RNA sequence: GGGAACGACUCGAGUAGAGUCGAAAACAGCAUCUGUUGAGCCAACCAGAUUAGCCAGUGUGUUGUUUGCUCUUGACGAUAGUGCUGGGUAGUGUUUCUGCGUUGAAACAUGCGUUUUACAUAGGUACUCCACAAUAGUCUUCGGACUAUUGUGGAGAAAAGAAACAACAACAACAAC
Reactivity to 2A3 in 0.01 (KOAc 150mM, MgCl2 10mM, bicine 150mM(pH8.5), 24C), signal-to-noise 1, nucleotides 027 to 126: c040a040g040c010a020u010c040u130g060u090u080g060a010g000c000c010a020a000c030c020a010g000a090u100u060a000g070c020c050a050g030u040g000u000g000u070u090g030u020u090u110g050c020u000c000u090u200g060a030c050g020a000u010a110g080u070g000c000u030g040g060g000u080a050g000u030g060u010u040u000c020u030g050c030g140u080u120g020a080a030a020c020a020u060g000c030g020u030u020u030u060a060c060a070u100a060g070g090u160a090
Reactivity to DMS in 0.01 (KOAc 150mM, MgCl2 10mM, bicine 150mM(pH8.5), 24C), signal-to-noise 2, nucleotides 027 to 126: c000a080g000c020a030u010c070u010g010u000u010g020a110g000c090c040a030a060c110c020a060g010a060u000u010a070g010c050c030a100g010u010g030u010g020u010u000g000u020u000u010g000c040u000c070u020u000g030a070c050g000a070u010a040g050u000g010c010u000g000g000g020u000a050g010u000g000u000u000u000c020u010g020c210g000u000u010g000a060a050a070c050a040u000g000c070g020u000u000u000u000a080c130a100u010a100g010g000u000a140